[RMDB]
RNA sequence: GGGAACGACUCGAGUAGAGUCGAAAAGAACAUCAGUUCGCUGAUGUUCAAAGGCCGAGUAGUGUUGGGUCGCGAAAGGCCAUAGAUAAACAUUCACUCAGAAAACAACGUCCUUCGGGACGUUGAAGAUUCGUACCUAGUUCGCUAGGUACGAAUCAAAAGAAACAACAACAACAAC
Reactivity to 2A3 in 0.01 (KOAc 150mM, MgCl2 10mM, bicine 150mM(pH8.5), 24C), signal-to-noise 4, nucleotides 027 to 126: g010a000a000c000a010u000c010a010g010u050u070c150g000c100u010g000a000u000g000u010u010c010a010a000a010g010g010c020c000g000a010g000u000a000g000u010g160u130u190g150g150g210u210c020g010c000g050a050a000a000g000g000c000c000a000u010a000g000a010u070a010a120a010c060a050u140u200c050a060c050u080c050a030g140a050a120a020a020c010a000a000c000g000u000c000c000u040u090c170g070g000g000a000c000g000u010u000g000a000a000
Reactivity to DMS in 0.01 (KOAc 150mM, MgCl2 10mM, bicine 150mM(pH8.5), 24C), signal-to-noise 3, nucleotides 027 to 126: g000a010a000c000a010u000c000a020g020u000u010c240g030c010u000g010a010u000g000u000u000c000a010a130a100g000g020c020c000g000a090g000u010a040g000u000g030u020u010g000g000g020u030c040g000c030g020a140a150a160g000g010c010c010a070u010a050g000a120u000a040a060a090c110a080u010u020c150a070c030u000c050a130g010a080a060a120a200c010a000a000c000g010u000c000c010u000u010c160g020g000g010a010c000g010u000u000g000a030a030

Background: Structure probing data (2A3 and DMS) for a 177-nucleotide construct. The RNA was probed in 150 mM KOAc, 10 mM MgCl2 and 150 mM bicine (pH 8.5) at 24 C. Reactivities are given for positions 27 through 126.